[RMDB]
RNA sequence: GGGAACGACUCGAGUAGAGUCGAAAAGAUAUGGAGAGGUCAACAGCUCCAGUAUCGGAAACGAUACGGAGACAUGACCCUCCUAAGUCAAAACCAGACCGAUCAUGUUCGCAUGAUCGGUCUGGAAGUACCCACAGUACUUCGGUACUGUGGGUACAAAAGAAACAACAACAACAAC
Reactivity to 2A3 in 0.01 (KOAc 150mM, MgCl2 10mM, bicine 150mM(pH8.5), 24C), signal-to-noise 1, nucleotides 027 to 126: g010a040u080a030u160g000g000a060g100a140g080g000u040c010a050a070c060a280g030c020u040c000c040a040g000u000a000u030c010g010g040a080a010a010c000g000a000u010a020c010g050g000a020g030a020c020a110u030g010a010c000c000c010u000c000c000u010a130a040g050u010c020a010a010a100a150c000c000a000g000a000c020c000g010a000u030c020a000u000g060u110u170c300g020c200a030u020g010a010u000c000g100g000u000c000u000g000g000a000a000
Reactivity to DMS in 0.01 (KOAc 150mM, MgCl2 10mM, bicine 150mM(pH8.5), 24C), signal-to-noise 1, nucleotides 027 to 126: g010a030u000a290u010g050g000a020g000a110g040g000u000c020a010a110c220a180g000c020u000c000c000a130g010u010a000u010c000g010g000a200a030a140c000g030a020u000a010c000g010g010a010g000a030c070a140u000g010a010c000c050c000u000c000c010u010a020a030g000u000c000a150a070a160a200c020c000a010g010a010c020c000g010a010u000c000a010u000g020u010u050c190g000c020a000u020g020a000u030c010g000g000u000c000u010g000g000a000a030
Source information
Chemical mapping of a 177-nucleotide RNA with 2A3 and DMS. For DMS, 774 sequencing reads were counted. Source: RMDB library TTRDEL, as collected in RNAgym. Reactivities are given for positions 27 through 126. The 2A3 profile rests on 1,757 reads.